[RMDB]
RNA sequence: GGGAACGACUCGAGUAGAGUCGAAAAGAUAUGGAUACUGCGAGGAACUACAGCUACCAAUCGGAAACGAUUGAAGCUGCCGAUGAGCAGUAUCCUAAGUCAAAAGCCAUUUGUUCGCAAAUGGCAAGUCCUAUACUCAGUUCGCUGAGUAUAGGACAAAAGAAACAACAACAACAAC
Reactivity to DMS in 0.01 (KOAc 150mM, MgCl2 10mM, bicine 150mM(pH8.5), 24C), signal-to-noise 5, nucleotides 027 to 126: g000a030u000a300u010g010g010a010u010a000c000u000g000c000g010a220g020g020a130a050c110u010a170c000a010g000c020u000a090c250c010a000a000u000c000g010g000a060a070a190c010g000a010u000u000g020a100a030g000c000u000g010c050c100g000a170u010g020a300g010c000a000g000u000a000u000c000c000u010a010a090g000u010c040a080a080a080a130g000c000c000a010u000u000u000g020u000u010c170g040c000a000a000a000u000g010g020c000a020a040
Reactivity to 2A3 in 0.01 (KOAc 150mM, MgCl2 10mM, bicine 150mM(pH8.5), 24C), signal-to-noise 5, nucleotides 027 to 126: g010a030u060a020u130g000g000a010u000a000c000u010g000c020g020a100g080g080a100a050c130u210a110c300a010g000c000u070a160c150c040a010a010u010c000g000g030a050a040a040c010g010a010u000u010g010a020a000g000c000u030g010c040c030g190a250u180g090a030g020c000a000g000u010a010u000c000c000u000a000a010g010u010c030a030a000a070a150g000c000c000a010u000u020u020g070u060u140c300g010c170a000a010a010u000g000g000c000a000a000
Conditions: 150 mM KOAc, 10 mM MgCl2 and 150 mM bicine (pH 8.5), 24 C. An RNA of 177 nucleotides, treated with DMS and 2A3 and read out base by base. Reactivities are given for positions 27 through 126.